[RMDB]
RNA sequence: GGGAACGACUCGAGUAGAGUCGAAAAUAAGGAAACCUUCCUGGUGGCGAGAAUAAAUGAGCACUCGCGCUCAAAAACCGCACGUUCGCGUGCGGAAAAGAAACAACAACAACAAC
Reactivity to 2A3 in 0.01 (KOAc 150mM, MgCl2 10mM, bicine 150mM(pH8.5), 24C), signal-to-noise 3, nucleotides 027 to 095: u210a030a030g110g010a070a010a040c000c000u040u030c020c010u020g060g010u040g090g000c030g000a040g080a130a040u190a180a130a130u190g040a020g010c030a030c040u050c020g020c010g000c000u010c020a010a010a000a020a010c000c000g000c020a020c020g020u030u030c120g010c000g030u000g000c000g020g000a050
Reactivity to DMS in 0.01 (KOAc 150mM, MgCl2 10mM, bicine 150mM(pH8.5), 24C), signal-to-noise 2, nucleotides 027 to 095: u030a070a080g010g000a050a080a120c070c040u020u000c010c010u010g000g020u010g020g030c030g010a040g010a160a080u020a040a090a080u020g000a020g030c040a130c080u010c040g010c050g000c040u010c000a050a000a040a050a060c080c020g020c020a020c070g000u010u020c110g030c030g000u010g020c060g040g000a000